[RMDB]
RNA sequence: GGGAACGACUCGAGUAGAGUCGAAAAGAUAUGGAUGUAUAGUCUUUGAUCUAACGGUGUCGGAAACGACAUUUAGGGAGACUAAACAUCCUAAGUCAAAAUCUCGGAUAGUUCGCUAUCCGAGAAACGCUAAAUUAUUGUUCGCAAUAAUUUAGCGAAAAGAAACAACAACAACAAC
Reactivity to 2A3 in 0.01 (KOAc 150mM, MgCl2 10mM, bicine 150mM(pH8.5), 24C), signal-to-noise 6, nucleotides 027 to 126: g020a000u030a010u090g000g000a000u000g020u020a060u030a070g000u010c010u250u300u270g110a130u030c010u010a010a060c180g180g020u060g000u040c000g020g000a040a030a030c010g010a000c000a010u010u000u010a010g000g010g030a090g000a010c000u000a030a100a000c000a000u000c000c000u000a050a010g020u000c020a060a050a130a300u020c010u000c000g000g010a010u000a000g020u060u030c150g000c180u000a000u000c000c010g000a000g000a000a000a000
Reactivity to DMS in 0.01 (KOAc 150mM, MgCl2 10mM, bicine 150mM(pH8.5), 24C), signal-to-noise 7, nucleotides 027 to 126: g000a010u000a170u010g000g010a020u000g010u000a160u000a010g010u000c000u000u000u010g010a100u020c010u000a010a050c300g010g030u000g010u000c000g030g000a050a020a090c000g020a010c000a020u000u000u000a020g000g000g010a020g020a020c000u010a020a090a030c000a000u000c000c000u000a010a100g010u000c020a110a110a160a170u000c000u000c010g000g000a010u000a010g010u000u010c300g020c000u000a010u000c000c000g000a000g000a000a040a100